Conditions: 150 mM KOAc, 10 mM MgCl2 and 150 mM bicine (pH 8.5), 24 C. This 177-nucleotide RNA was probed chemically with 2A3. It was measured as part of the RMDB library OK1LIB. For 2A3, 460 sequencing reads were counted.

RNA sequence: GGGAACGACUCGAGUAGAGUCGAAAAAAUACAUCUUUGUAUAAGUUCAUUAGCUUUAUGUAUACCUUCUUUGACAGGUACUUCUAUUACUGGCUUUCCAUUGAAUCUGUCCAUAUCAACAUUUUUACGAUGAUCAGCGGUUCGCCGCUGAUCAUCGAAAAGAAACAACAACAACAAC
Reactivity to 2A3 in 0.01 (KOAc 150mM, MgCl2 10mM, bicine 150mM(pH8.5), 24C), signal-to-noise 2, nucleotides 027 to 126: a000a000u140a040c020a090u030c100u000u160u060g120u000a070u030a100a230g130u170u140c110a080u190u000a030g010c000u160u170u000a040u070g030u000a010u010a010c020c000u050u000c020u130u130u090g180a120c080a020g000g060u020a150c080u000u000c000u000a040u160u000a140c070u000g020g040c000u070u130u000c030c030a070u000u040g000a000a130u000c000u090g160u000c000c010a000u090a000u210c040a010a040c020a040u000u000u130u110u300a040